[RMDB]
RNA sequence: GGGAACGACUCGAGUAGAGUCGAAAAGCCGACUGCGCUCACAACUGCCUUGCCUCCGAAAAGAUGGCCCCCGGAGCCAUAGAUCUUGACGAUAUCCUGCAGGACGAGCCUGCCUUCGCCACUCAUGGAGUCCCGUAUAGUUCGCUAUACGGGACUCAAAAGAAACAACAACAACAAC
Reactivity to 2A3 in 0.01 (KOAc 150mM, MgCl2 10mM, bicine 150mM(pH8.5), 24C), signal-to-noise 3, nucleotides 027 to 126: g050c020c020g020a040c020u050g000c030g050c010u080c030a080c010a030a170c070u090g020c000c030u040u120g020c000c020u030c010c010g110a020a070a020a020g100a070u060g050g000c020c000c000c020c050g050g010a010g000c000c000a040u090a050g100a080u030c020u060u120g070a040c050g010a010u050a040u140c010c040u020g000c020a020g000g030a030c020g000a000g060c000c000u030g020c000c000u060u060c020g030c030c020a080c010u020c020a090u060g140
Reactivity to DMS in 0.01 (KOAc 150mM, MgCl2 10mM, bicine 150mM(pH8.5), 24C), signal-to-noise 2, nucleotides 027 to 126: g010c010c020g000a080c080u010g000c050g030c050u030c050a070c130a070a030c050u000g000c020c060u010u030g000c060c000u000c010c080g020a070a040a060a080g000a060u000g020g000c030c060c020c000c020g030g000a070g000c000c040a050u020a060g020a060u000c020u010u030g000a050c150g000a060u000a050u010c010c030u000g010c060a100g000g020a200c150g020a150g000c020c020u020g000c010c060u000u000c040g000c050c000a060c070u020c090a070u040g040
An RNA of 177 nucleotides, treated with 2A3 and DMS and read out base by base. The reactions ran in a buffer of 150 mM KOAc, 10 mM MgCl2 and 150 mM bicine (pH 8.5), at 24 C. It was measured as part of the RMDB library OK1LIB. 2A3 adducts were read by reverse transcription with SuperScript II with manganese. For DMS the reverse transcriptase was MarathonRT.